[RMDB]
The record gives the reactivity of an RNA of 177 nucleotides to DMS and 2A3. The reactions ran in a buffer of 150 mM KOAc, 10 mM MgCl2 and 150 mM bicine (pH 8.5), at 24 C. The data come from the RNA Mapping Database (RMDB), library OK1LIB. Reactivities are given for positions 27 through 126.
RNA sequence: GGGAACGACUCGAGUAGAGUCGAAAAGACGACCUCAUCGUCGUGUCGCCGUUGACUGACAAGGAGCUCGCGGCGCAGACAAUCAUGGGCCACAACCUGAUGGCGGUUCCCGUCGUCGAUGCCGACAUCGGACAUGCAGGUUCGCCUGCAUGUCCGAAAAAGAAACAACAACAACAAC
Reactivity to DMS in 0.01 (KOAc 150mM, MgCl2 10mM, bicine 150mM(pH8.5), 24C), signal-to-noise 1, nucleotides 027 to 126: g000a010c000g010a000c000c080u080c060a060u000c160g000u000c000g020u000g000u060c080g030c040c000g050u020u020g000a120c080u000g120a050c180a190a120g000g010a090g080c170u000c020g070c000g000g020c060g020c020a090g000a080c000a090a070u100c300a020u010g010g000g000c090c100a110c110a090a080c130c040u000g030a040u000g000g050c060g000g010u000u000c000c000c020g000u000c000g060u000c040g020a050u000g000c130c040g010a100c010a090
Reactivity to 2A3 in 0.01 (KOAc 150mM, MgCl2 10mM, bicine 150mM(pH8.5), 24C), signal-to-noise 4, nucleotides 027 to 126: g010a000c010g020a030c010c000u040c050a070u040c030g040u040c050g030u010g070u200c010g000c020c000g020u120u300g040a010c080u080g020a090c110a140a190g100g000a030g100c060u040c060g000c020g010g000c010g020c000a010g020a080c000a010a060u160c070a060u100g000g040g020c030c050a080c020a120a060c010c070u090g060a110u060g030g020c010g000g000u040u020c000c020c000g010u000c000g000u000c020g020a060u200g040c040c000g040a020c000a040